Chemical mapping of a 177-nucleotide RNA with 2A3 and DMS. DMS (dimethyl sulfate) methylates the pairing face of unpaired adenines and cytosines. For DMS the reverse transcriptase was MarathonRT. The DMS profile rests on 3,320 reads.

[RMDB]
RNA sequence: GGGAACGACUCGAGUAGAGUCGAAAAGCUGACCAACAGACACGACACUAUCAUGUAAUAGAGUUCCCAGAAUAAACCAUCUAUAGUGUGGCCAAUGCGCUUCGGGGUAUUCUCUACAAUAAGUACGCCUCGUAUGUCUUUUCGAAGACAUACGAGGAAAAGAAACAACAACAACAAC
Reactivity to 2A3 in 0.01 (KOAc 150mM, MgCl2 10mM, bicine 150mM(pH8.5), 24C), signal-to-noise 8, nucleotides 027 to 126: g000c010u030g040a190c040c040a080a140c030a040g040a020c020a000c080g030a000c010a000c070u060a060u120c020a060u150g090u210a120a120u110a160g090a010g030u010u010c010c010c000a010g040a020a070u210a060a080a030c040c020a060u100c080u110a140u120a160g100u110g010u040g120g000c020c040a100a090u140g030c050g020c040u060u070c000g030g000g000g000u030a090u070u020c020u000c010u060a070c060a080a120u150a220a020g090u050a040c060g020
Reactivity to DMS in 0.01 (KOAc 150mM, MgCl2 10mM, bicine 150mM(pH8.5), 24C), signal-to-noise 3, nucleotides 027 to 126: g060c060u000g000a160c110c270a120a170c110a080g010a090c060a070c040g010a080c040a060c040u000a000u000c100a080u000g000u010a020a010u010a040g020a290g010u000u000c000c000c000a080g000a150a110u040a080a080a130c070c050a030u040c040u010a080u010a020g030u050g040u000g000g000c050c040a070a100u000g000c070g000c010u000u000c030g000g000g000g000u020a110u000u010c000u000c090u020a000c180a040a110u020a140a050g020u000a070c140g000